[RMDB]
RNA sequence: GGGAACGACUCGAGUAGAGUCGAAAACUUAUCUCUACUGCUCGUGAUGGCGUAAGGCGAGGCGAUAACUUCCAUAGUGUCUUAACAACAUUCAUUGACGCAGCACGAGGCCCCGCAGGUGUGGAGUCAACCUGACACUUCGGUGUCAGGAAAAGAAACAACAACAACAAC
Reactivity to DMS in 0.01 (KOAc 150mM, MgCl2 10mM, bicine 150mM(pH8.5), 24C), signal-to-noise 6, nucleotides 027 to 129: c100u050u020a020u020c050u030c050u030a150c090u050g010c050u010c030g000u000g000a060u000g020g050c230g000u040a060a000g000g000c060g030a030g000g000c180g040a090u000a020a080c110u020u020c040c080a090u080a060g020u030g040u050c000u020u020a020a050c150a070a120c070a090u000u000c110a030u000u050g000a040c140g020c040a030g030c090a030c120g000a070g060g030c020c010c000c000g080c100a050g000g000u060g040u020g040g010a120g000u020c130a110a090
Reactivity to 2A3 in 0.01 (KOAc 150mM, MgCl2 10mM, bicine 150mM(pH8.5), 24C), signal-to-noise 8, nucleotides 027 to 129: c020u090u090a090u110c010u000c010u040a060c020u020g060c000u000c010g020u060g010a060u050g000g000c050g050u020a030a030g030g010c030g030a020g040g050c050g060a060u040a160a070c050u120u040c030c020a060u070a100g110u070g030u080c010u060u070a090a040c040a030a010c010a070u100u190c020a030u050u300g000a010c040g010c020a000g000c010a010c080g020a050g010g000c000c000c000c000g010c010a020g000g050u040g020u030g020g010a020g010u010c010a030a060
An RNA of 170 nucleotides, treated with DMS and 2A3 and read out base by base. Conditions: 150 mM KOAc, 10 mM MgCl2 and 150 mM bicine (pH 8.5), 24 C. The DMS profile rests on 18,371 reads.